[RMDB]
RNA sequence: GGGAACGACUCGAGUAGAGUCGAAAAGAACCAGAGCCGUAUCCUCAAAGAGCUCCUGCUUGCCGAUAAGCGUCAUGUCGUGUAUCGACAAUCCGGUGACGAACGUUAGGAGAAGCGUGAUAUAGCACUCGAUGAGACCAUUCGUGGUCUCAUCGAGAAAAGAAACAACAACAACAAC
Reactivity to DMS in 0.01 (KOAc 150mM, MgCl2 10mM, bicine 150mM(pH8.5), 24C), signal-to-noise 1, nucleotides 027 to 126: g010a210a270c000c020a160g010a070g000c070c000g000u010a030u000c000c000u050c120a080a030a050g000a030g000c000u000c080c000u000g010c050u000u010g030c010c010g000a010u040a080a030g000c010g020u000c090a000u000g000u020c000g030u040g020u000a100u000c030g030a080c030a060a000u020c140c030g000g060u010g000a080c000g040a130a050c120g050u010u000a020g000g030a010g010a120a100g000c070g000u000g040a120u050a120u050a030g000c130a120
Reactivity to 2A3 in 0.01 (KOAc 150mM, MgCl2 10mM, bicine 150mM(pH8.5), 24C), signal-to-noise 3, nucleotides 027 to 126: g120a030a060c030c070a000g020a030g040c020c020g060u080a080u100c000c030u040c070a090a140a080g090a010g000c020u040c040c000u000g020c000u020u140g000c000c000g080a070u010a140a010g050c020g050u120c030a110u100g020u050c010g000u040g080u240a050u180c010g010a040c020a010a030u080c050c020g110g000u000g040a020c020g040a150a020c000g060u080u160a040g020g090a070g020a020a020g040c050g010u050g080a070u050a040u110a110g070c000a030